RNA sequence: GGGAACGACUCGAGUAGAGUCGAAAACCACGACUACGGUCGUGGAAGUUACAUACUUCGGUAUGUAACAGGAGUGCUUCGGCACUCCAGUACCAUGCGUGAGCAUGGUACACCGGUACUUCGGUACCGGACUAUAUUCGUGAGAAUAUAGAACCAGCACGUGAGUGCUGGAAGACCAUUCUACGGAAUGGUCAGAUCACGGUGACGUGAUCAACUCAGCCACGUGAGUGGCUGAGAAGUCUAACAUGUCGGGCUGAGACAUGUCUAGUGUAUACUUCGGUAUACACAAAAGAAACAACAACAACAAC
Reactivity to 2A3 in 0.01 (KOAc 150mM, MgCl2 10mM, bicine 150mM(pH8.5), 24C), signal-to-noise 9, nucleotides 027 to 266: c000c000a000c000g000a000c000u050a010c240g110g000u000c000g000u000g000g010a050a030g000u000u000a000c000a000u000a000c000u030u050c180g080g000u000a000u000g000u000a000a000c000a010g000g000a000g000u020g010c030u120u200c300g110g000c010a000c000u000c000c000a000g000u000a000c000c000a000u000g010c010g030u090g050a040g000c000a000u000g000g000u000a000c000a010c000c000g000g000u010a010c000u030u080c220g110g000u000a000c000c000g000g000a000c000u000a000u000a000u000u000c010g010u020g060a040g000a010a000u000a000u000a000g010a020a070c000c000a000g000c000a010c020g140u160g210a140g010u000g030c000u000g000g000a010a010g000a000c000c000a000u010u000c010u020a040c300g100g000a000a000u000g000g000u000c000a010g000a000u000c000a000c010g010g070u100g070a030c010g000u000g000a000u000c000a000a010c010u000c000a000g000c000c000a020c010g090u120g220a150g030u000g100g000c000u000g000a000g000a010a010g000u000c000u000a000a010c000a000u000g000u010c010g030g090g080c260u120g070a050g000a260c000a000u010g000u000c010u040a020
Reactivity to DMS in 0.01 (KOAc 150mM, MgCl2 10mM, bicine 150mM(pH8.5), 24C), signal-to-noise 2, nucleotides 027 to 266: c000c000a010c000g010a020c000u000a140c180g030g000u000c000g020u000g000g000a030a040g000u000u000a000c000a000u000a000c000u000u020c140g020g010u000a020u010g000u000a000a000c020a150g020g010a010g010u000g010c010u000u000c240g010g010c000a000c000u010c020c000a050g010u000a000c000c010a010u010g000c000g020u010g000a170g020c000a010u010g020g000u010a010c000a150c000c000g000g000u010a010c000u000u040c130g010g010u000a010c000c030g010g000a080c020u000a000u000a000u000u000c000g000u010g000a050g000a010a010u000a000u000a000g010a300a300c030c000a000g010c010a000c010g000u010g000a300g010u010g000c020u010g000g000a060a090g010a010c000c000a000u000u000c000u000a100c220g030g000a010a010u010g000g010u000c000a040g000a010u000c000a010c000g000g000u010g000a160c000g030u000g030a020u000c020a150a160c020u010c020a020g000c020c010a020c000g000u000g000a300g030u000g020g000c010u010g010a010g030a100a150g000u010c040u000a030a020c010a000u000g000u000c000g000g000g000c020u040g010a150g020a020c010a010u000g000u000c200u020a100